[RMDB]
RNA sequence: GGGAACGACUCGAGUAGAGUCGAAAAUGGACAAUCUUAAAGCCUACUUUCUCCUCCUCGGUAAAGGUUGAGAGAUCGGUCUUCUCGAGAGCAAAGGCAACUUGGGCUAGGGUUACGCCACCCCCAGGGUACUGUUGAGUUUCGACUCAACAGUACCAAAAGAAACAACAACAACAAC
Reactivity to 2A3 in 0.01 (KOAc 150mM, MgCl2 10mM, bicine 150mM(pH8.5), 24C), signal-to-noise 2, nucleotides 027 to 126: u050g000g010a020c010a000a060u070c010u030u160a250a070a030g010c000c000u040a100c000u060u070u030c060u020c000c000u010c010c000u020c040g050g010u090a110a080a000g040g010u080u050g030a070g000a010g010a050u040c030g010g020u020c000u020u010c040u050c030g090a080g000a000g030c060a080a040a020g030g000c020a050a070c060u090u110g000g010g040c000u030a040g000g040g000u000u020a060c090g000c000c010a030c000c000c020c020c000a000g040
Reactivity to DMS in 0.01 (KOAc 150mM, MgCl2 10mM, bicine 150mM(pH8.5), 24C), signal-to-noise 2, nucleotides 027 to 126: u000g000g000a070c100a070a010u020c020u020u010a170a150a090g020c000c020u030a050c130u000u000u000c090u000c020c020u000c030c010u020c050g020g020u020a070a040a040g000g000u000u000g000a150g000a100g000a080u000c020g000g010u000c000u000u000c050u000c020g000a090g020a080g050c160a060a050a070g010g030c300a030a060c130u000u010g000g000g010c040u000a130g010g000g010u000u010a060c130g000c000c020a110c060c050c000c020c010a110g010